[RMDB]
RNA sequence: GGGAACGACUCGAGUAGAGUCGAAAAACAUAGUUUGGCCGUCGUCAUACCAUUGAAGACGAAUCGUUAAAGACACCAGCUCGUCUUAUAGGAGCCCAUUUAGCAAAAACAGUCCUGUAGGAACCAAAUGAAAGAAUUACUUCGGUAAUUCUUUCAUAAAAGAAACAACAACAACAAC
Reactivity to 2A3 in 0.01 (KOAc 150mM, MgCl2 10mM, bicine 150mM(pH8.5), 24C), signal-to-noise 2, nucleotides 027 to 126: a000c020a030u150a060g020u040u050u120g030g000c040c020g010u010c010g010u010c020a050u070a260c040c050a160u070u130g070a080a020g050a020c040g030a040a010u100c050g030u050u090a120a130a020g030a020c000a000c020c010a000g010c040u030c010g050u030c050u010u090a050u050a050g020g050a040g010c000c010c020a040u060u070u060a060g000c020a050a030a060a040a010c010a010g110u040c020c000u040g040u070a020g030g030a030a040c030c000a130a130
Reactivity to DMS in 0.01 (KOAc 150mM, MgCl2 10mM, bicine 150mM(pH8.5), 24C), signal-to-noise 4, nucleotides 027 to 126: a090c080a070u000a070g010u000u010u000g020g020c050c020g010u000c020g000u010c020a080u000a140c130c100a110u010u000g010a080a060g000a030c020g010a080a050u000c100g020u000u020a080a080a130g010a070c070a040c040c050a040g010c060u000c060g010u000c050u000u000a050u000a050g010g000a080g010c040c020c040a100u010u010u000a090g000c070a040a050a070a060a050c110a090g000u010c020c020u000g020u000a040g000g000a050a080c110c100a040a100

Record summary: Structure probing data (2A3 and DMS) for a 177-nucleotide construct. The reactions ran in a buffer of 150 mM KOAc, 10 mM MgCl2 and 150 mM bicine (pH 8.5), at 24 C. It was measured as part of the RMDB library M2PK90. The DMS profile rests on 2,623 reads. Values cover nucleotides 27 to 126.